[RMDB]
RNA sequence: GGGAACGACUCGAGUAGAGUCGAAAAGAUAUGGAUACUCGAAACACAACAGCAUGCCAUCGGAAACGAUGGACAUGACAUGUGUAGAGUAUCCUAAGUCAAAUCAACCGCGUUCGCGCGGUUGAAAGUUCAUUAGAAAGUUCGCUUUCUAAUGAACAAAAGAAACAACAACAACAAC
Reactivity to DMS in 0.01 (KOAc 150mM, MgCl2 10mM, bicine 150mM(pH8.5), 24C), signal-to-noise 6, nucleotides 027 to 126: g000a020u000a070u020g010g000a010u000a000c000u000c010g010a150a230a110c010a010c010a140a150c200a180g000c000a010u000g000c000c000a010u000c000g010g000a040a020a030c000g010a010u000g010g000a070c000a000u000g010a030c070a210u010g040u000g010u000a200g010a020g010u000a000u000c000c000u000a000a050g000u000c000a110a130a180u000c000a000a000c000c000g010c000g020u000u010c300g040c020g040c020g000g000u000u000g000a010a050a100
Reactivity to 2A3 in 0.01 (KOAc 150mM, MgCl2 10mM, bicine 150mM(pH8.5), 24C), signal-to-noise 8, nucleotides 027 to 126: g000a010u020a010u060g010g000a000u020a010c010u020c050g130a240a300a020c030a010c020a300a300c080a170g030c000a010u010g010c000c000a000u000c000g000g000a000a010a010c010g000a000u010g000g090a050c010a000u000g020a000c040a260u300g000u010g010u050a100g000a000g000u000a000u000c000c000u000a000a000g000u000c030a010a010a240u020c000a000a000c000c000g030c040g030u040u070c300g010c000g000c010g160g000u000u000g000a010a000a000
This 177-nucleotide RNA was probed chemically with DMS and 2A3. For 2A3, 22,603 sequencing reads were counted. Conditions: 150 mM KOAc, 10 mM MgCl2 and 150 mM bicine (pH 8.5), 24 C. It was measured as part of the RMDB library TTRDES. The DMS profile rests on 9,604 reads.